[RMDB]
RNA sequence: GGGAACGACUCGAGUAGAGUCGAAAACUGUGGCUGUGUGAAGUGGAGGCCAUUUGGUUGGUCAUUGUUCCCAUCGCUGCUCAGAGCCACACUUCAUAUGACAAUCUGGGGAAGAGGGCUAACAGGAGUAAUCCUCAGGUUUCGACCUGAGGAUUACAAAAGAAACAACAACAACAAC
Reactivity to DMS in 0.01 (KOAc 150mM, MgCl2 10mM, bicine 150mM(pH8.5), 24C), signal-to-noise 3, nucleotides 027 to 126: c170u010g020u010g000g000c010u000g020u000g000u000g010a040a020g030u010g000g000a130g000g000c010c000a040u010u010u010g000g020u010u000g040g030u000c030a140u020u010g020u010u000c000c010c000a200u000c050g030c010u000g000c020u000c020a040g000a080g000c000c010a030c020a050c060u000u000c100a100u000a100u000g010a100c110a060a080u000c080u000g010g000g000g000a060a070g000a040g010g000g010c130u010a080a080c120a070g010g010a250
Reactivity to 2A3 in 0.01 (KOAc 150mM, MgCl2 10mM, bicine 150mM(pH8.5), 24C), signal-to-noise 2, nucleotides 027 to 126: c050u020g000u020g030g010c010u010g000u000g020u030g280a020a010g000u020g040g060a100g060g050c010c050a030u090u090u000g300g010u070u010g000g000u020c010a070u090u230g020u030u000c050c000c000a020u020c010g000c030u100g020c010u000c030a030g020a010g110c010c000a010c000a010c000u040u070c020a080u140a110u300g000a020c050a030a080u040c070u040g000g000g040g040a010a050g020a040g000g000g040c030u080a100a000c020a050g030g030a130
This 177-nucleotide RNA was probed chemically with DMS and 2A3. It was measured as part of the RMDB library OK2TST. For DMS the reverse transcriptase was MarathonRT. Reactivities are rounded to 0.1 and cut off at 0 and 3. The RNA was probed in 150 mM KOAc, 10 mM MgCl2 and 150 mM bicine (pH 8.5) at 24 C.